[RMDB]
RNA sequence: GGGAACGACUCGAGUAGAGUCGAAAAGAUAUGGACGGGAUAGGGAGAAUAUGAGGUCGGAAACGACCUAUAUUCAUCGAUCUAUUCGUCCUAAGUCAAAAGAUGUAUUUGUUCGCAAAUACAUCAAGGUGUCGAAUAUGUUCGCAUAUUCGACACCAAAAGAAACAACAACAACAAC
Reactivity to DMS in 0.01 (KOAc 150mM, MgCl2 10mM, bicine 150mM(pH8.5), 24C), signal-to-noise 2, nucleotides 027 to 126: g000a000u000a050u000g000g000a000c000g000g010g000a030u000a000g000g000g010a010g020a020a010u000a000u000g030a050g020g000u010c000g050g000a010a020a060c000g010a010c000c010u000a000u010a000u000u000c000a300u010c230g010a020u000c000u000a010u000u000c000g040u010c000c000u010a000a100g000u000c000a120a060a120a170g000a010u000g010u000a000u000u010u000g010u000u030c220g030c000a010a030a010u000a000c000a010u000c010a060a030
Reactivity to 2A3 in 0.01 (KOAc 150mM, MgCl2 10mM, bicine 150mM(pH8.5), 24C), signal-to-noise 1, nucleotides 027 to 126: g010a000u010a010u030g000g000a000c020g000g080g050a000u000a000g010g000g000a040g010a010a010u030a010u130g280a050g050g000u000c000g000g000a000a000a000c020g020a000c010c010u010a000u000a000u000u000c010a030u300c020g000a000u000c000u030a010u040u000c000g000u010c030c000u000a000a000g000u020c020a000a020a050a200g010a010u010g020u010a020u000u000u020g040u040u090c210g030c150a010a010a000u000a000c020a000u000c020a000a080
Conditions: 150 mM KOAc, 10 mM MgCl2 and 150 mM bicine (pH 8.5), 24 C. Chemical mapping of a 177-nucleotide RNA with DMS and 2A3. Reactivities are rounded to 0.1 and cut off at 0 and 3. DMS adducts were read by reverse transcription with MarathonRT.